[RMDB]
RNA sequence: GGGAACGACUCGAGUAGAGUCGAAAAGAAGAUAAGCCGCUUAGUAUUCCAGGAGCAUCGUUAAACGGCGUGUAUGGCGCUGCAAAAUUUGUGGAAUGGUACGACGGAUAUCCUACCAGUGAGUGCACAUAUGGUACCGCUUCGGCGGUACCAUAUGAAAAGAAACAACAACAACAAC
Reactivity to 2A3 in 0.01 (KOAc 150mM, MgCl2 10mM, bicine 150mM(pH8.5), 24C), signal-to-noise 1, nucleotides 027 to 126: g090a030a000g010a050u030a220a000g000c010c030g000c140u110u080a050g110u060a170u070u030c030c010a000g010g070a040g070c010a050u100c070g030u020u120a080a090a010c060g060g030c050g010u030g000u080a170u180g140g040c020g010c030u010g030c040a040a060a080a090u090u140u110g120u070g000g100a050a040u040g010g030u020a070c050g000a010c000g090g010a020u030a020u080c010c000u040a090c000c050a030g040u070g110a100g020u070g050c040a000
Reactivity to DMS in 0.01 (KOAc 150mM, MgCl2 10mM, bicine 150mM(pH8.5), 24C), signal-to-noise 3, nucleotides 027 to 126: g010a100a130g010a080u000a070a140g010c020c000g010c070u030u000a090g020u000a080u000u010c030c010a060g010g010a200g020c060a040u020c160g010u000u000a040a180a180c050g010g010c030g040u000g020u000a090u010g040g010c010g010c040u000g000c050a050a070a070a070u000u000u000g010u000g000g020a220a050u000g010g000u000a040c070g000a020c030g010g020a070u000a040u000c010c020u000a120c030c010a060g020u020g010a090g020u010g010c080a160